[RMDB]
RNA sequence: GGGAACGACUCGAGUAGAGUCGAAAAUCCCAUAGGUUGCCGAAUCCGAAAGGUUUGGAGGAACCGCUUUUUGGGGUUAAUCUGCAGUGAAGCUGCAGUAGGGAUACCUUCUGUCCCGCACCCGACAGCUAACUCCGUAGGCAAUAAAGGAAGGAGAGAUCAUUUACUGAUUCGUCAGUAAAUGAUCAAAAGAAACAACAACAACAAC
Reactivity to DMS in 0.01 (KOAc 150mM, MgCl2 10mM, bicine 150mM(pH8.5), 24C), signal-to-noise 4, nucleotides 027 to 156: u000c000c000c000a160u000a070g000g020u000u000g010c000c020g010a100a230u000c030c030g030a150a170a200g010g020u010u000u000g020g010a130g030g010a140a100c120c060g000c100u000u010u000u000u010g020g010g020g010u000u000a080a110u000c010u010g000c020a030g030u000g020a200a180g010c010u000g000c000a010g010u000a060g020g010g010a060u000a050c030c060u000u000c050u000g010u000c120c020c000g000c090a070c000c000c020g010a050c070a040g000c020u000a130a280c030u000c010c020g010u010a130g020g000c020a070a080u000a070a080a080g000g000a060a050g020g020a300g010a230
Reactivity to 2A3 in 0.01 (KOAc 150mM, MgCl2 10mM, bicine 150mM(pH8.5), 24C), signal-to-noise 5, nucleotides 027 to 156: u010c010c000c020a030u090a030g100g000u010u010g010c010c000g030a060a060u030c020c020g060a130a060a040g030g010u050u090u180g000g010a010g000g030a090a090c070c010g010c040u150u120u030u070u220g040g010g000g000u010u030a050a050u030c000u000g010c000a020g000u080g250a170a030g100c000u000g000c000a000g000u010a020g000g000g000a010u080a120c000c000u010u010c000u020g000u000c000c000c000g000c010a050c000c010c000g020a080c070a010g000c000u030a030a040c000u000c010c030g050u070a040g000g000c010a000a000u060a030a030a010g040g010a010a010g020g010a070g010a010